[RMDB]
RNA sequence: GGGAACGACUCGAGUAGAGUCGAAAAAAGACGCUGAUUACGUGUGCCACCGUUUUAUUUCUCUGUGCCUUGGAGCGGGCGUGCUUCUGGUUAAGACCAGGCUGCUUUUGGAUCUGAUGGACUUGCAAAGCUCAGCUGUCGACUCCGCCACACGGCCGUGUGCCUAACAUUUCGAUGUUAGGCACACAAAAGAAACAACAACAACAAC
Reactivity to 2A3 in 0.01 (KOAc 150mM, MgCl2 10mM, bicine 150mM(pH8.5), 24C), signal-to-noise 1, nucleotides 027 to 156: a030a000g050a000c020g020c020u050g080a080u000u150a080c070g060u090g030u110g080c060c030a040c000c020g010u040u040u000u030a130u080u060u000c080u020c030u040g120u090g030c000c000u060u110g020g020a040g000c010g000g000g020c050g000u040g020c000u060u110c020u020g040g000u040u080a080a020g050a000c000c000a020g020g000c060u050g000c000u000u240u000u210g090g010a040u040c030u020g030a090u110g050g010a050c020u000u040g000c070a100a030a030g010c000u010c000a050g010c030u020g000u060c010g000a050c010u000c000c010g000c060c000a050c000a010c000g160g060c010c000